RNA sequence: GGGAACGACUCGAGUAGAGUCGAAAAUCAGAUGAGACUAGUCAUCAGACUAGAUAGUAUCACACUACGGGUACAUAGUAGAGACAUACAUAGAUGGGUAUGACACAUCAGAGGCGCGGGCCACCGACCUGCUCAGGUAUUUCGAUACCUGAGCAGGAAAAGAAACAACAACAACAAC
Reactivity to 2A3 in 0.01 (KOAc 150mM, MgCl2 10mM, bicine 150mM(pH8.5), 24C), signal-to-noise 1, nucleotides 027 to 126: u050c000a020g040a050u020g050a010g110a140c010u010a010g030u000c020a190u110c150a180g020a000c010u000a000g010a020u080a030g080u060a060u080c020a010c030a000c140u060a000c060g080g030g000u100a040c050a060u060a000g030u000a020g030a010g020a110c000a030u090a020c010a010u090a040g090a140u090g050g010g000u090a060u090g070a040c000a010c010a130u090c040a030g040a060g030g010c070g000c050g030g030g020c030c020a040c000c040g040a040
Reactivity to DMS in 0.01 (KOAc 150mM, MgCl2 10mM, bicine 150mM(pH8.5), 24C), signal-to-noise 2, nucleotides 027 to 126: u010c100a180g030a050u010g010a150g020a160c030u010a020g010u030c030a200u020c200a140g020a070c010u000a000g000a060u010a080g010u000a030u000c080a100c070a080c120u010a010c140g010g000g020u040a070c020a050u000a110g030u000a050g040a140g010a110c110a040u000a070c070a040u000a020g000a110u000g010g000g010u000a010u010g000a050c070a100c010a030u000c010a050g010a060g020g000c160g010c100g030g000g020c020c050a110c030c040g000a130
Annotation:
The record gives the reactivity of an RNA of 177 nucleotides to 2A3 and DMS. The data come from the RNA Mapping Database (RMDB), library OK2TRN. The DMS profile rests on 820 reads. For DMS the reverse transcriptase was MarathonRT. The RNA was probed in 150 mM KOAc, 10 mM MgCl2 and 150 mM bicine (pH 8.5) at 24 C. 2A3 adducts were read by reverse transcription with SuperScript II with manganese.